[RMDB]
RNA sequence: GGGAACGACUCGAGUAGAGUCGAAAACGUACGUGGAGACACGUACGACGAGACUUCGGUCUCGAAUCGCGGCUGCGCCUGCGCCGCGCGCGCGAGGCGUCGGUGGUCGGCGAGCCCACGGACGCGAAAACUCGCGCGUAAAUAAAUAGCAGGCGAAACGCGCAUAGCGUUUCGACGCUAUGCGCGUAAAAGAAACAACAACAACAAC
Reactivity to 2A3 in 0.01 (KOAc 150mM, MgCl2 10mM, bicine 150mM(pH8.5), 24C), signal-to-noise 1, nucleotides 027 to 156: c000g000u000a010c000g000u000g000g060a070g030a080c000a000c000g000u010a000c000g000a020c000g000a000g000a000c000u160u150c250g040g000u020c000u000c000g010a020a100u070c020g000c010g000g020c010u060g050c000g000c000c000u000g000c060g000c010c000g000c000g020c060g000c000g010c000g010a000g020g000c020g000u000c070g110g000u010g010g000u010c040g020g150c150g040a050g000c050c000c000a000c020g100g000a010c000g000c020g030a170a050a050a190c010u000c000g000c000g000c000g030u010a000a030a020u270a000a000a000u020a000g000c000a000g000g010c000g000a010a000
Description:
This 207-nucleotide RNA was probed chemically with 2A3. For 2A3 the reverse transcriptase was SuperScript II with manganese. For 2A3, 1,025 sequencing reads were counted. The RNA was probed in 150 mM KOAc, 10 mM MgCl2 and 150 mM bicine (pH 8.5) at 24 C. Values cover nucleotides 27 to 156.